[RMDB]
RNA sequence: GGGAACGACUCGAGUAGAGUCGAAAAGAUGAAAAUAACCAACAAUGUGAUCUUGCUUGCGGAGGCAAACUUUGCACAGUAUAAAAUCUGCGAGUAGUGCUAUUGUUGGAAAGCAUACUGUGCAAAAACUCCGUCAUCCGUUCGCGGAUGACGGAGUAAAAGAAACAACAACAACAAC
Reactivity to 2A3 in 0.01 (KOAc 150mM, MgCl2 10mM, bicine 150mM(pH8.5), 24C), signal-to-noise 1, nucleotides 027 to 126: g070a010u270g030a020a110a000a040u270a050a080c000c000a010a010c040a000a000u180g180u010g300a300u100c050u000u060g000c000u000u000g000c000g040g040a030g210g000c060a040a020a000c020u050u000u000g000c000a000c000a000g000u010a050u010a090a060a000a130u000c000u000g000c000g010a050g000u040a000g140u040g030c000u040a040u180u000g000u000u000g060g000a070a000a000g080c000a000u000a040c000u000g000u030g000c020a000a000a050a000
The record gives the reactivity of an RNA of 177 nucleotides to 2A3. The data come from the RNA Mapping Database (RMDB), library OK1LIB. 2A3 adducts were read by reverse transcription with SuperScript II with manganese. Conditions: 150 mM KOAc, 10 mM MgCl2 and 150 mM bicine (pH 8.5), 24 C.